[RMDB]
RNA sequence: GGGAACGACUCGAGUAGAGUCGAAAACAAACUUAUUGGGGAACGAGUAAUGUCGAUGAGCAAUUCCAGGCUGGAUUAAAUACUGCGUUCGAAGAUAUCAACUGGACGCUCAGCUAUAGCCUGACGACUAAUAGCUAGCAUUCGUGCUAGCUAUUAGAAAAGAAACAACAACAACAAC
Reactivity to 2A3 in 0.01 (KOAc 150mM, MgCl2 10mM, bicine 150mM(pH8.5), 24C), signal-to-noise 7, nucleotides 027 to 126: c010a010a040a050c040u140u120a040u210u190g050g000g000g010a050a050c030g020a030g050u070a080a100u080g050u100c030g060a120u070g040a040g040c040a040a090u160u000c040c000a020g040g000c030u030g040g040a100u100u180a060a090a040u170a130c070u060g030c000g010u000u010c030g060a070a030g030a070u120a060u190c030a030a070c030u030g000g010a000c000g000c020u040c040a010g000c030u050a040u100a170g010c010c000u020g020a040c050g020a020
Reactivity to DMS in 0.01 (KOAc 150mM, MgCl2 10mM, bicine 150mM(pH8.5), 24C), signal-to-noise 8, nucleotides 027 to 126: c050a070a100a100c110u010u010a080u000u000g010g010g010g010a130a110c060g010a040g010u010a090a070u010g010u000c030g010a090u000g010a180g020c060a090a100u010u000c060c040a030g000g020c040u000g010g000a110u000u010a050a070a090u010a070c080u000g000c030g010u000u000c030g000a160a090g000a110u010a090u010c180a060a100c080u000g010g000a030c090g000c050u000c070a030g010c080u010a080u010a080g000c010c010u000g010a070c150g010a190